RNA sequence: GGGAACGACUCGAGUAGAGUCGAAAAGGAAAAGAAGAAUGAUCUUGCAGAAGGGACUAAGUCAUCUUCAACCAGCUUUGUCUCAAAAAGUAGUGAAGUCAAUUUGAGAGGGCUUUGCAUCAUACCACAUUAAAUCCCUGUUCGCAGGGAUUUAAUGAAAAGAAACAACAACAACAAC
Reactivity to 2A3 in 0.01 (KOAc 150mM, MgCl2 10mM, bicine 150mM(pH8.5), 24C), signal-to-noise 3, nucleotides 027 to 126: g020g020a050a050a000a070g040a030a000g040a020a070u030g030a040u080c020u050u090g030c030a010g050a240a080g130g050g010a040c040u080a050a010g000u010c010a040u020c040u070u040c010a040a060c030c000a000g030c020u020u040u100g050u020c010u010c060a080a110a020a010a000g100u190a030g030u040g080a040a000g030u030c030a060a110u070u150u190g080a100g020a060g000g000g060c000u040u050u040g000c000a010u030c000a010u110a140c020c020a030
Reactivity to DMS in 0.01 (KOAc 150mM, MgCl2 10mM, bicine 150mM(pH8.5), 24C), signal-to-noise 5, nucleotides 027 to 126: g010g000a060a050a110a180g000a030a020g000a080a060u000g000a040u000c030u000u010g010c120a110g020a100a110g010g010g000a070c070u010a050a050g030u000c020a040u000c030u010u000c030a050a160c110c120a080g000c050u000u000u010g010u010c010u000c030a060a070a050a070a100g020u010a080g020u010g010a030a050g010u000c040a050a100u000u010u000g000a140g000a090g000g000g000c020u000u000u010g000c060a100u000c090a080u000a080c140c120a160
An RNA of 177 nucleotides, treated with 2A3 and DMS and read out base by base.
Source: RMDB library OK2TST, as collected in RNAgym.
Conditions: 150 mM KOAc, 10 mM MgCl2 and 150 mM bicine (pH 8.5), 24 C.
High 2A3 reactivity points to a flexible backbone, as in loops and unpaired stretches.
For DMS the reverse transcriptase was MarathonRT.